[RMDB]
RNA sequence: GGGAACGACUCGAGUAGAGUCGAAAAAGCCAUACCAUUACGAUGGUAUGGCAAGUCCGUGACGGCGAUGGAUCCCGCCUGGCCGAUGCCGAACUGCCGAUCUGGCUGGUGGUUCCUGCCCCGUCAAAAAACGUAAAGCACUUCGGUGCUUUACGAACAAUAUUUAGGAGUUCGCUCCUAAAUAUUGAAAAGAAACAACAACAACAAC
Reactivity to 2A3 in 0.01 (KOAc 150mM, MgCl2 10mM, bicine 150mM(pH8.5), 24C), signal-to-noise 4, nucleotides 027 to 156: a000g000c000c000a000u000a000c000c000a000u050u050a040c210g090a030u010g000g010u010a000u010g000g010c000a000a000g020u000c010c010g020u020g000a000c000g010g020c110g030a020u040g000g000a010u090c030c020c000g000c000c020u050g050g000c000c010g020a010u100g160c070c040g160a250a150c140u190g090c040c040g060a020u030c080u130g010g000c000u000g000g010u010g000g020u010u010c020c000u050g040c030c010c010c000g000u000c000a090a000a060a000a000a000c000g000u000a010a000a000g000c000a000c010u040u120c210g090g000u000g000c000u000u000u000a000c010g000a010a000
Reactivity to DMS in 0.01 (KOAc 150mM, MgCl2 10mM, bicine 150mM(pH8.5), 24C), signal-to-noise 2, nucleotides 027 to 156: a170g030c000c000a000u000a030c000c000a030u000u000a150c190g020a170u010g030g010u000a010u010g010g000c010a010a020g010u000c010c020g040u000g010a040c050g000g020c080g020a150u000g010g000a050u000c100c010c030g000c000c020u000g030g000c000c030g020a080u010g010c070c050g030a140a100c060u020g030c040c000g010a070u010c030u020g020g000c020u000g020g020u000g000g010u000u000c010c060u000g020c040c080c000c000g030u020c010a000a020a070a040a110a140c000g000u000a040a010a010g000c000a000c000u000u030c300g090g050u000g000c010u000u000u000a000c000g030a090a130

This 207-nucleotide RNA was probed chemically with 2A3 and DMS. In probing experiments dimethyl sulfate is read out at A N1 and C N3, which are open when not base-paired. Source: RMDB library M2RFPK, as collected in RNAgym. The reactions ran in a buffer of 150 mM KOAc, 10 mM MgCl2 and 150 mM bicine (pH 8.5), at 24 C. For 2A3 the reverse transcriptase was SuperScript II with manganese.